[RMDB]
RNA sequence: GGGAACGACUCGAGUAGAGUCGAAAAGAGCCACCAUACCAGACCUGUUUAUGCAUGUUUAAUAAAUAUUUGCAAAGUACCUACAUUACUUGAUGCUCUGUGGAAGUUGAUGGGCAGACAUGGUGAGCAAAGUGUGCAUGGUUCAUGCCCUCAGGGAGUUAACCUGCAAAUUCGUUUGCAGGUUAACAAAAGAAACAACAACAACAAC
Reactivity to DMS in 0.01 (KOAc 150mM, MgCl2 10mM, bicine 150mM(pH8.5), 24C), signal-to-noise 2, nucleotides 027 to 156: g010a080g010c070c040a040c090c040a110u000a060c040c020a090g010a130c090c020u020g010u000u000u000a060u030g010c040a040u000g030u010u010u000a060a110u000a100a070a080u000a090u000u000u000g020c030a010a060a070g020u000a050c030c000u000a090c020a120u030u020a060c080u010u000g010a130u010g030c030u010c010u000g050u010g000g000a040a200g000u000u010g000a070u010g020g020g000c030a060g000a090c020a040u000g010g010u000g000a090g030c060a040a030a130g020u010g050u000g030c040a070u010g000g020u000u010c070a130u000g000c030c010c020u000c070a110g000g030g000a230
Reactivity to 2A3 in 0.01 (KOAc 150mM, MgCl2 10mM, bicine 150mM(pH8.5), 24C), signal-to-noise 3, nucleotides 027 to 156: g040a000g050c030c020a010c000c010a060u060a090c010c040a040g030a080c020c020u050g040u030u100u090a100u130g060c030a020u040g050u090u160u120a160a090u180a090a100a040u220a100u050u080u060g000c020a080a060a030g030u040a050c010c020u020a040c030a070u120u110a040c060u060u080g030a070u050g050c000u000c010u060g040u030g090g020a080a040g010u050u090g090a060u080g010g030g000c000a000g040a020c000a040u050g030g010u110g050a070g040c080a080a090a040g100u120g010u010g040c040a040u030g000g000u060u050c040a020u110g000c000c020c010u080c030a030g040g000g050a080